[RMDB]
This 177-nucleotide RNA was probed chemically with 2A3 and DMS. DMS adducts were read by reverse transcription with MarathonRT. 2A3 is a SHAPE reagent: it acylates the 2'-hydroxyl of flexible nucleotides of all four kinds. Reactivities are given for positions 27 through 126.

RNA sequence: GGGAACGACUCGAGUAGAGUCGAAAAAACGAGGACAUGUCGCCUCGAAUGGCGUCGGGGAGCCGGCAGCUUACCCCAAGGAUGAGCGCCUAAUGCCGGUACCCGGGAACGAGCGUGUGGCGAACGCGAGAGCAUUUAGUUUCGACUAAAUGCUCUCAAAAGAAACAACAACAACAAC
Reactivity to 2A3 in 0.01 (KOAc 150mM, MgCl2 10mM, bicine 150mM(pH8.5), 24C), signal-to-noise 7, nucleotides 027 to 126: a000a000c080g010a030g030g030a040c050a130u210g040u180c090g010c010c010u020c050g030a020a050u100g030g010c030g020u080c010g020g000g000g000a020g020c000c000g000g000c000a000g000c000u020u040a040c000c010c020c070a080a120g060g020a170u110g010a000g010c000g000c000c000u020a030a020u020g000c000c000g000g010u020a020c000c010c000g030g050g000a060a050c080g020a020g040c000g000u010g010u010g010g000c000g000a010a010c010g010c030
Reactivity to DMS in 0.01 (KOAc 150mM, MgCl2 10mM, bicine 150mM(pH8.5), 24C), signal-to-noise 8, nucleotides 027 to 126: a080a060c070g000a040g010g010a040c050a100u020g010u020c120g030c000c000u000c080g020a090a050u030g010g010c060g020u010c030g000g000g010g010a110g010c000c000g000g010c010a010g020c010u000u000a040c040c000c060c200a140a150g010g010a070u010g010a010g020c000g000c030c040u010a020a020u000g010c000c010g000g010u000a120c010c000c000g010g010g010a060a070c110g010a170g010c000g000u010g000u000g000g000c000g010a300a010c030g010c050